[RMDB]
RNA sequence: GGGAACGACUCGAGUAGAGUCGAAAAGAUAUGGACCGCUAGCUAGGCGGUGGUCGGAAACGACCACCCGCUUUGUACUAGCGAGUCCUAAGUCAAACGAGGGCUGAACUUCGGUUCAGCCCUCGAAGAUCACAAGAUUGUUCGCAAUCUUGUGAUCAAAAGAAACAACAACAACAAC
Reactivity to DMS in 0.01 (KOAc 150mM, MgCl2 10mM, bicine 150mM(pH8.5), 24C), signal-to-noise 1, nucleotides 027 to 126: g010a010u000a140u010g000g020a010c010c000g000c000u000a010g010c070u000a060g070g030c000g000g010u000g010g030u000c000g020g010a030a030a060c000g000a020c000c000a010c060c050c100g020c010u000u000u000g010u010a120c010u000a010g010c000g000a050g010u000c000c000u000a010a080g010u000c020a110a100a230c040g000a010g030g000g020c000u000g000a020a020c010u000u020c140g020g030u000u000c000a000g000c000c000c020u000c010g000a000a100
Chemical mapping of a 177-nucleotide RNA with DMS.
Reactivities are given for positions 27 through 126.
For DMS, 1,971 sequencing reads were counted.
Source: RMDB library TTRDEL, as collected in RNAgym.
For DMS the reverse transcriptase was MarathonRT.